[RMDB]
An RNA of 177 nucleotides, treated with 2A3 and DMS and read out base by base. It was measured as part of the RMDB library RFMREP. The RNA was probed in 150 mM KOAc, 10 mM MgCl2 and 150 mM bicine (pH 8.5) at 24 C. As a SHAPE reagent, 2A3 marks flexible, mostly unpaired nucleotides at the ribose 2'-OH. Values cover nucleotides 27 to 126.

RNA sequence: GGGAACGACUCGAGUAGAGUCGAAAAGGAUCGGGCGAUGUUAUUAUUUUGACUCGCUCGGCACCUUACGAGAAAUCAAAGUCUUUGGGUUCUGGGGGGAGUAUGGUCGCAAGGCUGAAACUUAAAGCCGAAGUAUUUAGUUCGCUAAAUACUUCGGAAAAGAAACAACAACAACAAC
Reactivity to 2A3 in 0.01 (KOAc 150mM, MgCl2 10mM, bicine 150mM(pH8.5), 24C), signal-to-noise 1, nucleotides 027 to 126: g050g000a060u010c010g000g030g030c000g000a020u150g050u020u030a050u080u070a180u020u300u130u160g020a000c000u000c000g000c000u000c020g000g010c000a270c000c020u030u000a050c070g010a000g060a050a110a020u260c090a160a120a000g080u000c030u090u100u080g010g010g030u080u180c050u050g060g030g020g010g030g000a000g010u080a050u140g020g030u040c030g000c090a040a000g020g000c030u060g050a070a030a040c080u120u060a080a000a070g010
Reactivity to DMS in 0.01 (KOAc 150mM, MgCl2 10mM, bicine 150mM(pH8.5), 24C), signal-to-noise 3, nucleotides 027 to 126: g010g000a240u010c000g010g000g010c010g010a030u020g010u000u000a040u010u010a210u000u010u000u000g010a010c000u000c010g000c000u000c000g010g010c160a020c000c000u000u000a120c130g010a080g000a040a050a090u030c130a130a130a130g000u000c030u000u010u000g010g010g010u000u000c070u010g010g010g000g000g000g030a050g000u010a030u000g010g010u000c030g020c130a080a120g000g010c040u000g000a100a090a070c070u010u000a050a090a110g010